The record gives the reactivity of an RNA of 207 nucleotides to 2A3. It was measured as part of the RMDB library RNAMAK. 2A3 adducts were read by reverse transcription with SuperScript II with manganese. Conditions: 150 mM KOAc, 10 mM MgCl2 and 150 mM bicine (pH 8.5), 24 C. Values cover nucleotides 27 to 156.
RNA sequence: GGGAACGACUCGAGUAGAGUCGAAAAGCGUACUACCAUAGCUUUUGACGCCUAUGGUGUGGGAGCUGACUCCCAAAUAGGAGUCAGCGAGGAUCACACCUAAGGGCGAUAAGCUAUGGUAUCGCAAAAGACCAAUGGUCUUCGGACCAUUGGUCAAGAGGCGUAGAAUGUUCGCAUUCUACGCCUCAAAAGAAACAACAACAACAAC
Reactivity to 2A3 in 0.01 (KOAc 150mM, MgCl2 10mM, bicine 150mM(pH8.5), 24C), signal-to-noise 1, nucleotides 027 to 156: g020c000g130u130a090c000u000a000c070c010a020u000a000g000c030u180u000u080u070g160a140c000g000c000c010u020a110u120g020g020u000g000u000g000g020g000a010g000c000u020g000a000c000u070c070c000c020a300a300a000u300a150g000g000a000g000u000c000a000g000c000g030a030g000g000a020u010c000a010c000a010c000c060u000a020a050g010g020g030c000g000a000u000a050a000g010c000u000a000u030g000g000u030a010u010c000g000c000a110a200a000a000g010a000c000c000a000a000u000g000g000u000c040u110u100c290g010g000a000c000c010a000u050u000g000g000u000c000a000a000